[RMDB]
RNA sequence: GGGAACGACUCGAGUAGAGUCGAAAAAAAGACGCGGUUGCCGAUCGGUAUGGAUGCCACCGUGACGGCUCAAUCACACAAGUGCCAACGAUAACGAGGCGCUCUCUAUUGCUGCGUAACUGACGGCUAGAUACAGCCAGGUUCGCCUGGCUGUAAACCCAUUAAGUGUGUUCGCACACUUAAUGGGAAAAGAAACAACAACAACAAC
Reactivity to 2A3 in 0.01 (KOAc 150mM, MgCl2 10mM, bicine 150mM(pH8.5), 24C), signal-to-noise 2, nucleotides 027 to 156: a000a000a000g120a010c040g010c040g010g000u050u030g000c020c010g030a030u050c030g000g050u140a080u130g080g040a060u160g050c020c010a010c000c000g000u020g060a090c040g010g010c010u010c060a060a060u080c010a000c030a020c030a200a020g020u010g040c030c020a140a070c080g060a100u100a240a060c060g010a030g000g000c010g000c020u010c000u000c030u060a070u120u220g030c020u000g000c040g040u020a060a080c020u040g080a060c020g020g020c040u050a040g000a070u030a020c000a000g000c000c000a000g010g020u030u020c060g010c020c000u000g000g020c000u000g000u000a000a000a000
Reactivity to DMS in 0.01 (KOAc 150mM, MgCl2 10mM, bicine 150mM(pH8.5), 24C), signal-to-noise 2, nucleotides 027 to 156: a120a130a110g000a060c020g040c010g030g010u000u000g060c000c010g000a100u020c020g040g000u000a040u050g000g000a120u000g000c000c060a090c030c010g060u000g010a160c120g000g020c010u000c070a070a090u000c110a070c040a100c120a080a050g050u000g010c050c050a090a180c060g000a130u010a040a180c020g020a170g000g000c020g070c010u000c020u000c030u000a060u000u010g000c010u030g010c000g030u000a130a100c050u000g010a070c070g010g000c020u000a140g020a270u000a000c010a020g020c000c000a000g020g000u000u000c300g040c030c000u000g000g030c000u000g040u010a000a070a180

Chemical mapping of a 207-nucleotide RNA with 2A3 and DMS. DMS adducts were read by reverse transcription with MarathonRT. Source: RMDB library M2RFPK, as collected in RNAgym. 2A3 adducts were read by reverse transcription with SuperScript II with manganese. The RNA was probed in 150 mM KOAc, 10 mM MgCl2 and 150 mM bicine (pH 8.5) at 24 C. Values cover nucleotides 27 to 156.